[RMDB]
RNA sequence: GGGAACGACUCGAGUAGAGUCGAAAAGUGAUGGGUCAGUCAAGUCAUCCGCAGGUACGUAUACCGCUUGUACAGAGGUGAUAGAACCUUUUUUGGUUGACGUGAUACGUUCUUGCAGAACACCCAUCGUAUUACGGGGAUUCGUCCCCGUAAUACGAAAAGAAACAACAACAACAAC
Reactivity to 2A3 in 0.01 (KOAc 150mM, MgCl2 10mM, bicine 150mM(pH8.5), 24C), signal-to-noise 3, nucleotides 027 to 126: g130u100g010a020u010g000g060g020u130c130a060g060u080c030a090a040g090u050c020a090u010c050c010g010c010a000g000g000u020a000c000g020u020a000u020a040c010c000g030c120u060u070g080u100a020c000a040g040a010g010g010u030g040a120u130a270g100a050a070c010c000u020u020u020u010u140u110g240g010u050u070g030a070c020g020u070g020a020u000a000c000g000u000u020c000u020u020g000c020a020g010a080a020c000a040c010c000c000a000u020
Reactivity to DMS in 0.01 (KOAc 150mM, MgCl2 10mM, bicine 150mM(pH8.5), 24C), signal-to-noise 4, nucleotides 027 to 126: g000u020g000a030u000g000g000g000u020c180a130g030u040c130a040a050g020u010c100a130u010c000c020g030c040a000g010g010u000a020c050g000u010a010u010a040c030c000g010c040u000u010g000u050a080c170a050g000a020g000g000u000g000a200u060a140g010a070a030c020c000u000u000u000u020u020u020g000g010u010u010g010a070c020g000u000g000a020u000a020c070g000u000u000c000u030u020g000c010a070g000a070a090c130a090c020c010c010a000u000
About this RNA: This 177-nucleotide RNA was probed chemically with 2A3 and DMS. It was measured as part of the RMDB library OK1LIB. Reactivities are given for positions 27 through 126. The RNA was probed in 150 mM KOAc, 10 mM MgCl2 and 150 mM bicine (pH 8.5) at 24 C.